The record gives the reactivity of an RNA of 177 nucleotides to 2A3 and DMS. For DMS, 1,704 sequencing reads were counted. For 2A3, 3,579 sequencing reads were counted. It was measured as part of the RMDB library TTRDES. 2A3 is a SHAPE reagent: it acylates the 2'-hydroxyl of flexible nucleotides of all four kinds. In probing experiments dimethyl sulfate is read out at A N1 and C N3, which are open when not base-paired.
[RMDB]
RNA sequence: GGGAACGACUCGAGUAGAGUCGAAAAGAUAUGGACGUUAUUAAAUUCUAUGAAGUACUUCGGAAACGAAGUAUGGAGAAUGAUACUGCGUCCUAAGUCAAACAGCGUCACCUUCGGGUGACGCUGAGAGAACGAGUUAGUUCGCUAACUCGUUCUCAAAAGAAACAACAACAACAAC
Reactivity to 2A3 in 0.01 (KOAc 150mM, MgCl2 10mM, bicine 150mM(pH8.5), 24C), signal-to-noise 3, nucleotides 027 to 126: g000a000u010a020u060g000g000a010c000g070u070u010a110u070u270a300a300a300u080u000c040u040a300u220g010a000a010g000u000a000c000u000u000c000g000g000a000a000a000c000g000a000a000g010u000a000u000g040g000a000g010a030a020u060g020a030u030a120c140u090g000c000g000u000c020c000u000a000a000g000u010c000a060a030a130c020a040g020c000g000u000c000a040c020c000u030u230c300g090g000g000u000g000a000c010g000c010u000g000a020
Reactivity to DMS in 0.01 (KOAc 150mM, MgCl2 10mM, bicine 150mM(pH8.5), 24C), signal-to-noise 2, nucleotides 027 to 126: g000a030u000a010u020g020g000a020c010g040u000u000a040u000u000a120a120a300u020u000c000u000a300u010g000a130a180g000u000a000c000u000u000c010g000g000a000a010a080c020g000a010a010g010u000a000u000g000g000a020g010a040a040u000g010a080u000a030c300u020g010c000g010u010c000c020u010a000a050g000u000c000a180a120a300c010a010g000c000g050u010c000a000c000c000u000u000c300g020g010g000u000g030a000c020g030c010u010g000a020